The record gives the reactivity of an RNA of 177 nucleotides to DMS. DMS adducts were read by reverse transcription with MarathonRT.
[RMDB]
RNA sequence: GGGAACGACUCGAGUAGAGUCGAAAAAUGUUGAUCAAAGUUUGAUUAUCGCUGCCAGGAACAUAGUAAGAAGAGCAACGGUAUCGGCAGACCCAUUAGCAUCUCUGUUGGAAAUGUGCCACAGCACCGCUAAAUGGGUGUUCGCACCCAUUUAGCGAAAAGAAACAACAACAACAAC
Reactivity to DMS in 0.01 (KOAc 150mM, MgCl2 10mM, bicine 150mM(pH8.5), 24C), signal-to-noise 2, nucleotides 027 to 126: a060u000g030u010u010g030a050u020c060a110a130a130g030u000u000u010g000a140u000u000a080u000c050g030c030u010g010c010c060a170g000g020a090a100c110a090u000a110g010u010a100a040g000a170a080g000a170g020c020a010a050c120g040g000u000a040u000c040g000g010c000a080g010a120c000c010c010a040u000u000a070g020c130a020u000c020u020c010u000g020u000u020g020g030a080a110a040u010g010u010g020c010c060a060c200a070g010c070a040c070